[RMDB]
RNA sequence: GGGAACGACUCGAGUAGAGUCGAAAAUCGUAAUAAAAUUCUGUACAUAAAAGUCGAAAGUAUUGCUAUAGUUAAGGUUGCGCUUGCCUAUUUAGGCAUACUUCUCAGGAUGGCGCGUUGCAGUCCACACAUUCACUGUGUUCGCACAGUGAAUGUGAAAAGAAACAACAACAACAAC
Reactivity to DMS in 0.01 (KOAc 150mM, MgCl2 10mM, bicine 150mM(pH8.5), 24C), signal-to-noise 2, nucleotides 027 to 126: u000c080g010u000a000a070u000a040a090a080a100u000u000c020u010g030u020a070c100a100u000a100a090a060a140g000u000c090g000a090a050a030g000u000a020u010u000g010c010u000a080u010a040g010u000u000a040a020g000g010u000u000g040c130g000c020u020u000g000c020c000u000a140u000u000u000a030g000g030c000a020u000a020c030u010u010c100u000c040a110g010g000a050u020g000g000c070g010c070g010u000u010g000c060a090g010u000c020c050a190
Reactivity to 2A3 in 0.01 (KOAc 150mM, MgCl2 10mM, bicine 150mM(pH8.5), 24C), signal-to-noise 1, nucleotides 027 to 126: u040c020g040u060a020a030u080a150a140a000a000u200u010c020u050g070u110a100c020a100u220a150a080a040a030g180u170c080g050a070a080a000g020u010a010u040u200g020c020u060a030u120a160g100u070u070a070a010g050g050u050u040g070c060g010c090u040u120g040c000c010u070a120u060u100u110a020g020g000c000a000u000a020c000u090u000c020u010c060a030g130g070a130u060g050g010c010g010c050g000u000u040g040c000a000g060u000c000c000a050
Source information:
Structure probing data (DMS and 2A3) for a 177-nucleotide construct. For DMS the reverse transcriptase was MarathonRT. Reactivities are given for positions 27 through 126. The reactions ran in a buffer of 150 mM KOAc, 10 mM MgCl2 and 150 mM bicine (pH 8.5), at 24 C. For DMS, 1,273 sequencing reads were counted.